The record gives the reactivity of an RNA of 177 nucleotides to 2A3 and DMS.

RNA sequence: GGGAACGACUCGAGUAGAGUCGAAAAGCUACUACAUCUGCAAAGUUUAAUCGAAAAAUUUGCCAGUGAUAUGAUGGCCUUGUCACAGAGAUCACAAGGGACACGGAGUUGACUUUUGCUCAAGGUGACUUAAAAAUUAGUUCGCUAAUUUUUAAGUAAAAGAAACAACAACAACAAC
Reactivity to 2A3 in 0.01 (KOAc 150mM, MgCl2 10mM, bicine 150mM(pH8.5), 24C), signal-to-noise 9, nucleotides 027 to 126: g020c010u020a030c010u030a030c040a040u040c020u040g010c010a010a030a040g010u040u090u160a160a100u140c070g120a060a030a020a080a110u040u060u080g030c040c030a030g020u030g070a060u050a060u220g120a080u040g040g010c010c030u070u110g010u020c000a010c010a080g080a020g000a120u060c020a010c020a070a040g050g020g030a030c010a010c060g080g010a060g030u030u040g040a030c000u030u050u090u070g000c010u010c040a030a020g040g020u030g050
Reactivity to DMS in 0.01 (KOAc 150mM, MgCl2 10mM, bicine 150mM(pH8.5), 24C), signal-to-noise 9, nucleotides 027 to 126: g020c050u000a050c050u010a090c060a050u010c020u010g010c020a040a030a050g010u010u010u010a090a100u050c170g000a050a060a050a050a080u010u010u010g000c050c070a060g020u010g000a120u010a040u010g010a100u010g010g010c020c070u000u000g000u000c060a070c030a080g010a110g010a070u010c060a060c070a070a060g000g000g010a080c080a050c090g000g010a090g010u010u000g010a060c040u000u000u010u010g010c040u010c050a060a070g000g010u010g000

About this RNA: Source: RMDB libraries RFM100 and RFMREP, as collected in RNAgym. The RNA was probed in 150 mM KOAc, 10 mM MgCl2 and 150 mM bicine (pH 8.5) at 24 C.